[RMDB]
RNA sequence: GGGAACGACUCGAGUAGAGUCGAAAAUAUACAUCCGAAGUCGGCACAACACCGGACUCGCGGUGAGCGAUGCAGCGUAGCUUAUGCUACGCAGCUGCUGUGCGGAUGGCUAGCAAAAGCUAGCCUAAAUGCCACGUAUAUUCGUAUACGUGGCAUUAAAAGAAACAACAACAACAAC
Reactivity to DMS in 0.01 (KOAc 150mM, MgCl2 10mM, bicine 150mM(pH8.5), 24C), signal-to-noise 5, nucleotides 027 to 126: u020a090u030a110c180a070u020c030c000g010a070a130g000u000c010g020g010c000a050c040a140a150c030a000c010c000g000g020a190c120u030c170g020c040g000g000u000g010a150g010c050g010a090u050g020c030a040g020c010g010u010a000g010c000u040u040a140u020g000c020u000a000c010g020c010a020g050c000u000g000c000u020g030u020g010c000g010g020a040u010g000g000c000u000a010g000c020a110a070a090a140g000c000u010a000g000c000c020u000a020
Reactivity to 2A3 in 0.01 (KOAc 150mM, MgCl2 10mM, bicine 150mM(pH8.5), 24C), signal-to-noise 5, nucleotides 027 to 126: u190a010u040a040c030a030u020c010c000g010a120a000g070u040c040g060g050c010a010c020a100a150c000a040c030c000g100g180a250c090u060c120g190c010g020g010u020g010a020g000c060g140a170u160g020c030a000g000c010g010u000a000g000c020u290u200a120u300g000c000u020a000c000g030c000a000g000c010u020g000c020u020g010u030g000c020g030g000a040u080g010g000c000u010a000g000c000a000a100a300a060g010c000u000a000g000c000c010u010a020
Record summary:
Conditions: 150 mM KOAc, 10 mM MgCl2 and 150 mM bicine (pH 8.5), 24 C. An RNA of 177 nucleotides, treated with DMS and 2A3 and read out base by base. High 2A3 reactivity points to a flexible backbone, as in loops and unpaired stretches. DMS (dimethyl sulfate) methylates the pairing face of unpaired adenines and cytosines. DMS adducts were read by reverse transcription with MarathonRT. 2A3 adducts were read by reverse transcription with SuperScript II with manganese.